This 177-nucleotide RNA was probed chemically with DMS and 2A3. Conditions: 150 mM KOAc, 10 mM MgCl2 and 150 mM bicine (pH 8.5), 24 C. The 2A3 profile rests on 55,336 reads. It was measured as part of the RMDB library OK1LIB.
RNA sequence: GGGAACGACUCGAGUAGAGUCGAAAACUGCCGACGCCCUGUGUUGAGGCGUGGUGUCGCCUCGAGACAGUCGUUGAGAUCCGAAGAAGGGUGUACAUCUGACUGUUCGAGCAGAUGUGAGUCGAGGGCGUCUGCCUACGUUCGCGUGGGUGGGCGCAAAAGAAACAACAACAACAAC
Reactivity to DMS in 0.01 (KOAc 150mM, MgCl2 10mM, bicine 150mM(pH8.5), 24C), signal-to-noise 9, nucleotides 027 to 126: c040u010g010c050c010g010a030c020g010c060c080c010u000g010u010g010u010u010g010a050g000g010c000g010u010g010g020u030g020u020c010g010c040c000u000c010g000a050g010a020c010a020g000u010c020g010u000u000g000a160g000a050u010c020c010g010a130a130g010a160a130g000g000g010u010g010u030a070c010a010u000c000u020g010a060c010u010g000u020u020c120g010a110g010c020a020g000a050u010g010u010g000a100g010u010c030g000a150g000g000
Reactivity to 2A3 in 0.01 (KOAc 150mM, MgCl2 10mM, bicine 150mM(pH8.5), 24C), signal-to-noise 9, nucleotides 027 to 126: c010u010g020c000c000g020a000c000g010c000c020c010u020g000u000g020u020u110g040a020g010g030c010g000u020g020g070u050g030u020c010g000c000c000u000c000g000a000g000a000c000a000g000u010c000g000u000u010g010a020g010a020u000c000c010g030a070a020g080a060a080g070g000g000u020g020u030a020c000a000u000c020u060g040a050c000u010g030u070u040c010g030a010g000c000a000g000a030u060g020u010g030a020g030u030c010g010a040g010g060